Structure probing data (DMS and 2A3) for a 177-nucleotide construct. The 2A3 profile rests on 2,233 reads. High 2A3 reactivity points to a flexible backbone, as in loops and unpaired stretches. It was measured as part of the RMDB library OK2TST. DMS adducts were read by reverse transcription with MarathonRT.
[RMDB]
RNA sequence: GGGAACGACUCGAGUAGAGUCGAAAACAAAGGUCACGCCGCGUUCGGCAAGCUGGGCUUCAAGUUGCAGCACGAACUUCUGCACGACCUGAUGAAUGACCGGCACCGGCAGCGGGCCAAACGGAAAAUAGUAAAUGCGUUUCGACGCAUUUACUAUAAAAGAAACAACAACAACAAC
Reactivity to DMS in 0.01 (KOAc 150mM, MgCl2 10mM, bicine 150mM(pH8.5), 24C), signal-to-noise 4, nucleotides 027 to 126: c060a080a120a110g000g030u000c010a130c060g030c020c080g000c300g030u010u010c010g000g040c090a070a060g010c010u010g010g000g010c010u000u010c060a030a050g020u010u000g010c020a030g020c250a070c120g010a080a140c110u000u010c010u000g030c000a180c070g000a050c070c070u010g000a060u000g020a060a050u020g020a110c020c020g010g010c010a090c030c010g030g000c080a050g020c010g010g000g000c000c020a040a070a100c100g000g000a110a100a070
Reactivity to 2A3 in 0.01 (KOAc 150mM, MgCl2 10mM, bicine 150mM(pH8.5), 24C), signal-to-noise 2, nucleotides 027 to 126: c010a000a080a060g020g010u030c050a080c240g040c030c020g160c050g060u100u100c020g070g000c100a040a040g020c000u010g000g040g030c000u040u050c080a110a050g030u080u030g060c050a010g000c020a010c200g100a150a080c040u190u040c010u040g010c010a000c020g060a050c010c050u020g020a060u070g030a060a130u120g060a060c030c000g000g000c020a030c070c020g030g000c010a040g020c010g000g000g010c000c000a050a050a040c050g070g040a000a070a060